[RMDB]
RNA sequence: GGGAACGACUCGAGUAGAGUCGAAAAGAUAUGGAACCUCUGGAGGACAGGGUAGAACGCGAUGAAACGCUUCGGAAACGAAGCGUGGAGCGUUCUACCUGGGUCCGUUGAAAGAGGUUCCUAAGUCGACAGAAAGUUAGUUCGCUAACUUUCUGUCAAAAGAAACAACAACAACAAC
Reactivity to DMS in 0.01 (KOAc 150mM, MgCl2 10mM, bicine 150mM(pH8.5), 24C), signal-to-noise 2, nucleotides 027 to 126: g010a160u020a300u020g020g000a020a010c000c010u010c000u000g000g030a080g010g020a010c010a300g000g020g000u010a010g020a010a000c010g020c000g000a120u030g000a150a110a020c000g010c000u020u020c010g020g000a160a110a220c010g000a010a000g010c000g000u000g000g000a060g000c010g000u000u000c000u000a000c000c000u010g000g010g010u010c000c010g000u000u010g000a090a150a020g010a030g010g000u000u000c000c000u000a010a070g010u010c080